RNA sequence: GGGAACGACUCGAGUAGAGUCGAAAAUUAAUUUGACAAAAGAAGAAUACGUAUCCAUUCAGUACUCCAGAGGGACUUGAAAACUGUUCUUCCCUGAACUAACGCUGGACUAUCAUGGGAUGUGAAGGUAUGAUGGGAUGUUCGCAUCCCAUCAUACAAAAGAAACAACAACAACAAC
Reactivity to DMS in 0.01 (KOAc 150mM, MgCl2 10mM, bicine 150mM(pH8.5), 24C), signal-to-noise 2, nucleotides 027 to 126: u000u020a080a100u010u010u020g000a120c100a090a100a070a120g000a080a100g000a070a070u000a020c070g010u000a070u020c040c020a040u010u000c120a040g000u000a070c210u000c020c030a050g000a140g000g000g000a090c200u000u000g000a050a080a100a070c210u000g010u020u000c020u010u000c010c030c040u010g000a020a140c070u010a030a090c070g000c040u000g040g010a040c120u000a050u000c100a020u000g010g000g010a030u010g030u010g050a090a040g030
Reactivity to 2A3 in 0.01 (KOAc 150mM, MgCl2 10mM, bicine 150mM(pH8.5), 24C), signal-to-noise 1, nucleotides 027 to 126: u050u010a080a050u090u070u130g060a080c040a020a110a010a010g120a100a000g070a070a030u090a120c030g000u000a040u090c000c000a000u060u070c020a040g020u020a050c040u000c010c000a020g000a040g110g010g040a020c070u100u050g060a020a060a060a020c010u100g100u080u020c000u020u010c010c000c010u010g050a090a040c010u010a120a000c050g030c000u000g060g000a040c010u090a040u100c000a080u120g020g000g010a000u000g060u070g070a040a000g100
Source: RMDB library RFMREP, as collected in RNAgym. Structure probing data (DMS and 2A3) for a 177-nucleotide construct. The DMS profile rests on 1,087 reads. Conditions: 150 mM KOAc, 10 mM MgCl2 and 150 mM bicine (pH 8.5), 24 C.